[RMDB]
RNA sequence: GGGAACGACUCGAGUAGAGUCGAAAAGUGAGACAAGGACAAAAGAGCCAUUUGGUCUACCUGCCUCACCUAUCUUGGACUCCUGCAACAAAAUGAUUUGAGGCAAAGUCUUGGUCUAAUUAAUUGAUGAGCUAUAUGUAUAGCAGACAAGAGAACAACCCGGAUAAAUGUUCGCAUUUAUCCGGGUAAAAGAAACAACAACAACAAC
Reactivity to 2A3 in 0.01 (KOAc 150mM, MgCl2 10mM, bicine 150mM(pH8.5), 24C), signal-to-noise 3, nucleotides 027 to 156: g030u020g000a030g000a020c060a090a130g030g000a020c080a030a300a070a090g070a050g030c020c000a090u090u090u300g010g000u020c020u000a060c030c000u000g000c000c000u060c000a010c010c000u040a050u080c050u020u060g030g020a050c030u010c040c040u090g070c020a020a030c010a010a150a070a070u140g070a120u090u120u140g040a020g020g020c000a140a100a020g020u000c000u040u050g080g000u010c020u040a050a100u110u110a100a140u200u150g080a060u090g010a040g000c010u010a020u010a030u200g180u160a080u060a120g010c000a000g010a030c040a040a010g010a000g110a060a040c020a010
Reactivity to DMS in 0.01 (KOAc 150mM, MgCl2 10mM, bicine 150mM(pH8.5), 24C), signal-to-noise 1, nucleotides 027 to 156: g000u000g000a080g000a120c010a020a080g020g000a060c100a120a050a070a110g010a240g020c040c040a300u000u000u040g000g010u000c020u000a090c040c040u000g000c020c020u000c040a010c010c050u000a130u000c010u000u020g030g050a120c030u000c050c030u000g020c040a050a130c020a040a090a160a170u010g000a230u000u000u010g000a130g020g030c000a100a060a100g000u000c020u000u020g020g050u000c000u000a110a110u000u000a040a100u030u000g050a130u010g000a160g000c020u010a050u000a140u000g000u000a020u000a020g020c020a050g010a090c030a000a140g010a130g000a050a030c090a080